[RMDB]
RNA sequence: GGGAACGACUCGAGUAGAGUCGAAAAUUUUGUUGAAGCGUAUGGGUUUAUGUAGAUUACAGAAUCCCUGAAGGUGAAUUGUCCCAGUAUUCGGAGCGAUUUCUUCUCCAACGAUGCCAUAUUUGCACCACCAGAAACUAUUCGUAGUUUCUGGUGGAAAAGAAACAACAACAACAAC
Reactivity to DMS in 0.01 (KOAc 150mM, MgCl2 10mM, bicine 150mM(pH8.5), 24C), signal-to-noise 2, nucleotides 027 to 126: u000u010u000u000g020u010u000g030a140a140g000c120g040u010a040u000g000g020g020u000u010u010a090u020g000u000a100g000a260u000u000a060c040a010g020a150a050u000c000c000c030u000g000a050a060g020g030u000g000a050a040u000u010g000u000c010c000c010a220g000u010a090u010u010c090g000g000a120g040c100g000a030u020u010u000c050u000u000c010u000c020c050a030a070c080g010a070u000g020c020c070a020u010a040u000u010u000g030c190a150